The record gives the reactivity of an RNA of 177 nucleotides to DMS and 2A3.
For 2A3, 3,224 sequencing reads were counted.
2A3 adducts were read by reverse transcription with SuperScript II with manganese.
Values cover nucleotides 27 to 126.
RNA sequence: GGGAACGACUCGAGUAGAGUCGAAAAGAAGACUAGUUCGCUAGUCUUCAAAAGAGCUAGCAAUGUUCAGCUAGCAAAGAUCGUAAGAUCAAAUGAACAAAAAAACCAUCGACUUCGGUCGAUGGAACGCUUUAGCUAAGUUCGCUUAGCUAAAGCGAAAAGAAACAACAACAACAAC
Reactivity to DMS in 0.01 (KOAc 150mM, MgCl2 10mM, bicine 150mM(pH8.5), 24C), signal-to-noise 1, nucleotides 027 to 126: g010a030a000g010a040c000u000a010g010u010u010c180g030c000u000a000g020u000c000u000u000c000a070a080a140a130g000a150g000c000u000a010g000c000a060a140u020g020u000u010c030a030g010c000u000a000g000c010a060a050a110g000a020u000c000g000u010a130a110g000a010u000c000a010a070a090u000g000a020a010c040a020a010a000a060a030a050a250c020c000a000u000c000g000a000c000u000u000c210g030g010u000c000g030a020u000g020g010a010a010
Reactivity to 2A3 in 0.01 (KOAc 150mM, MgCl2 10mM, bicine 150mM(pH8.5), 24C), signal-to-noise 2, nucleotides 027 to 126: g000a010a000g000a000c000u000a000g020u030u060c080g000c100u000a000g000u010c000u000u000c000a000a000a000a000g040a010g030c000u000a000g010c030a080a300u070g010u010u020c000a020g000c000u010a000g000c010a030a070a010g010a000u010c010g050u150a120a030g000a020u020c040a010a020a020u080g020a030a000c020a020a060a020a010a000a000a060c010c000a000u000c010g000a000c000u020u050c270g070g000u000c000g000a000u000g000g000a000a010